[RMDB]
Source information:
Source: RMDB library 15KLIB, as collected in RNAgym. The record gives the reactivity of an RNA of 170 nucleotides to 2A3 and DMS. For 2A3, 4,099 sequencing reads were counted. The RNA was probed in 150 mM KOAc, 10 mM MgCl2 and 150 mM bicine (pH 8.5) at 24 C.
RNA sequence: GGGAACGACUCGAGUAGAGUCGAAAACUUAAUUUUCUUCUUGGCCUUCCGGAGCUCCCUCUCGAGUUCCUCCGCCCUUUUUCUUCCAGACACCCACUGCUCGAGGACGUCCUCCCUUCCCCCUCGAAAACUGGAUCCUUCGGGAUCCAGAAAAGAAACAACAACAACAAC
Reactivity to 2A3 in 0.01 (KOAc 150mM, MgCl2 10mM, bicine 150mM(pH8.5), 24C), signal-to-noise 3, nucleotides 027 to 129: c010u020u150a040a100u110u100u090u000c040u060u000c020u010u030g050g020c000c000u030u000c070c000g020g000a000g000c030u020c000c000c000u070c000u010c010g000a000g030u000u000c000c010u010c000c020g040c020c000c010u030u030u030u020u020c000u020u020c040c060a020g000a040c010a020c020c040c010a080c020u040g040c000u040c020g000a040g050g030a200c020g020u050c000c030u060c000c000c000u030u080c000c000c000c000c000u000c000g060a080a050a020a020
Reactivity to DMS in 0.01 (KOAc 150mM, MgCl2 10mM, bicine 150mM(pH8.5), 24C), signal-to-noise 1, nucleotides 027 to 129: c160u020u000a110a080u040u060u000u070c090u020u000c080u000u040g030g050c090c030u020u020c090c060g040g000a160g010c110u090c040c060c040u020c020u030c080g070a090g000u000u030c000c060u000c000c120g070c080c000c030u020u000u000u000u000c130u000u000c150c040a070g000a190c000a080c010c040c070a170c000u030g000c080u090c040g000a060g060g000a180c150g010u030c010c040u020c040c000c000u000u000c010c020c000c000c010u000c000g020a000a070a210a130